Chemical mapping of a 177-nucleotide RNA with DMS and 2A3. For DMS the reverse transcriptase was MarathonRT. For DMS, 773 sequencing reads were counted. Reactivities are given for positions 27 through 126. For 2A3 the reverse transcriptase was SuperScript II with manganese. Conditions: 150 mM KOAc, 10 mM MgCl2 and 150 mM bicine (pH 8.5), 24 C.
[RMDB]
RNA sequence: GGGAACGACUCGAGUAGAGUCGAAAAGGCCUGAGGAAUGGCUCCUCUGUUUAUAACACACCCAAUAUAAACCUGGUCAUGAUGUGAGGAGGGCUACAAAGUUUGUUGCCGUCCCCCAAACACAUGUGAAGUCAUUAAACUUCGGUUUAAUGACUUCAAAAGAAACAACAACAACAAC
Reactivity to DMS in 0.01 (KOAc 150mM, MgCl2 10mM, bicine 150mM(pH8.5), 24C), signal-to-noise 1, nucleotides 027 to 126: g000g010c050c060u000g000a030g030g000a090a140u010g010g000c070u000c010c020u000c000u000g000u010u000u000a020u000a070a090c080a060c180a110c020c060c030a130a070u010a060u010a050a070a020c030c300u030g030g000u030c050a000u000g000a050u000g000u000g000a180g020g030a030g000g000g000c030u010a030c060a010a070a190g000u000u000u000g020u000u010g010c010c020g020u010c010c010c020c000c030a060a170a070c130a030c140a050u000g000u000
Reactivity to 2A3 in 0.01 (KOAc 150mM, MgCl2 10mM, bicine 150mM(pH8.5), 24C), signal-to-noise 1, nucleotides 027 to 126: g030g040c000c020u010g040a000g060g030a080a080u130g160g000c000u040c000c020u070c030u000g010u040u060u030a160u030a070a050c030a010c020a020c080c020c010a060a000u080a020u020a040a080a030c000c050u000g030g010u030c010a040u050g140a020u030g050u030g020a030g000g010a010g040g020g040c020u030a000c020a000a130a160g130u070u160u080g060u030u020g030c000c000g130u010c000c000c010c010c020a040a150a000c050a010c020a020u100g110u060